[RMDB]
RNA sequence: GGGAACGACUCGAGUAGAGUCGAAAAGUCGACGAGACGCGGCCGCUCUUUCCGGCGGCGCAGUUCGUGACCGUGAAGGAGGCGGCGGGAUUCGCGAGCGGCGCGUCGAUGACGCCCGCGGCCGCAACCAUUACUACUGGUUCGCCAGUAGUAAUGGAAAAGAAACAACAACAACAAC
Reactivity to DMS in 0.01 (KOAc 150mM, MgCl2 10mM, bicine 150mM(pH8.5), 24C), signal-to-noise 5, nucleotides 027 to 126: g020u000c020g010a080c110g010a170g000a070c060g010c020g010g000c000c000g000c010u010c080u000u000u000c090c110g000g000c020g010g010c010g010c060a070g010u000u000c030g030u000g000a110c020c020g000u010g010a100a090g000g000a080g020g010c050g010g000c010g000g000g000a180u010u000c040g020c020g000a100g020c010g000g020c060g010c010g000u000c000g010a060u010g000a060c160g000c010c020c030g010c020g000g000c010c010g000c050a140a160
Reactivity to 2A3 in 0.01 (KOAc 150mM, MgCl2 10mM, bicine 150mM(pH8.5), 24C), signal-to-noise 8, nucleotides 027 to 126: g020u020c020g030a120c080g030a040g000a080c050g010c000g080g010c000c000g020c010u060c040u080u200u040c050c000g020g000c010g040g060c010g000c010a010g030u050u060c020g010u030g060a100c000c010g020u070g130a140a080g080g060a040g050g050c050g020g000c070g010g030g030a270u190u110c030g000c010g010a010g010c010g030g000c010g000c010g020u010c010g020a080u100g020a020c080g060c020c010c000g000c010g010g000c000c000g000c010a010a020

Description:
This 177-nucleotide RNA was probed chemically with DMS and 2A3. The 2A3 profile rests on 27,024 reads. Conditions: 150 mM KOAc, 10 mM MgCl2 and 150 mM bicine (pH 8.5), 24 C. 2A3 adducts were read by reverse transcription with SuperScript II with manganese.